[RMDB]
Chemical mapping of a 177-nucleotide RNA with DMS and 2A3.
RNA sequence: GGGAACGACUCGAGUAGAGUCGAAAAGAAGAAAGGCGCAGCGCGAGCCCGACGCGCAGGUGCGAUUAAGCACCAGGUGGACGCGCACGGGCAGGGGGAGCGCGAGGGCCACCACCAGCGCCGAAAAGGGUAUACUAAUCUUCGGAUUAGUAUACCCAAAAGAAACAACAACAACAAC
Reactivity to DMS in 0.01 (KOAc 150mM, MgCl2 10mM, bicine 150mM(pH8.5), 24C), signal-to-noise 4, nucleotides 027 to 126: g020a120a070g000a050a130a090g020g010c010g030c010a190g000c010g010c000g000a180g000c000c010c000g000a290c070g020c000g000c020a080g020g020u000g010c000g030a180u030u050a090a100g000c000a000c000c020a090g000g010u000g020g010a180c130g020c010g030c010a090c040g000g000g060c000a110g000g010g010g000g010a190g000c020g020c000g010a110g010g000g020c050c040a150c030c000a200c030c040a130g000c000g010c000c000g010a020a050a120a090
Reactivity to 2A3 in 0.01 (KOAc 150mM, MgCl2 10mM, bicine 150mM(pH8.5), 24C), signal-to-noise 4, nucleotides 027 to 126: g200a050a000g060a010a080a050g010g000c010g010c040a070g000c020g010c020g040a020g020c000c000c000g020a060c050g000c000g000c030a010g000g000u000g000c030g060a100u270u230a130a030g000c000a000c000c000a010g010g050u060g020g040a050c080g000c020g010c040a030c040g050g000g030c010a080g090g050g010g010g050a140g020c000g010c000g020a060g030g020g020c010c000a010c010c000a010c000c000a020g000c010g010c000c010g040a050a030a020a030

For DMS, 8,238 sequencing reads were counted.
It was measured as part of the RMDB library OK1LIB.